[RMDB]
RNA sequence: GGGAACGACUCGAGUAGAGUCGAAAACGCGGCGCGCGAGGCAGCGACGGGGAGCGCGCGAGCGAGGCGGGCCCACAGCCCCCGCCGCGGAGCCGAGGGCAAGGUCUGGUGCCAGCAGCCGCGGUAACAAAGCAAAAUUAUUCGUAAUUUUGCUUUGAAAAGAAACAACAACAACAAC
Reactivity to DMS in 0.01 (KOAc 150mM, MgCl2 10mM, bicine 150mM(pH8.5), 24C), signal-to-noise 8, nucleotides 027 to 126: c010g010c000g000g010c000g010c120g020c020g000a170g020g030c020a170g010c020g000a050c020g000g010g010g010a160g020c040g010c080g010c070g010a080g010c050g020a110g030g010c070g010g000g010c020c040c040a090c150a190g000c030c010c010c010c010g010c010c000g010c020g000g000a130g020c010c020g010a150g010g000g010c030a070a090g000g000u010c040u020g010g000u010g000c010c000a200g000c020a250g000c010c000g010c010g000g000u020a070a150
Reactivity to 2A3 in 0.01 (KOAc 150mM, MgCl2 10mM, bicine 150mM(pH8.5), 24C), signal-to-noise 8, nucleotides 027 to 126: c010g000c000g010g000c020g010c020g000c010g030a170g030g000c010a050g080c010g020a010c020g030g000g010g040a210g030c060g000c020g010c030g040a040g030c030g010a050g070g050c060g030g030g030c000c040c010a100c040a010g010c000c000c000c000c000g000c000c000g000c010g010g020a020g000c010c010g040a100g020g050g020c060a080a040g070g020u060c090u160g040g050u040g020c010c000a010g000c000a010g000c010c000g000c000g000g000u010a010a010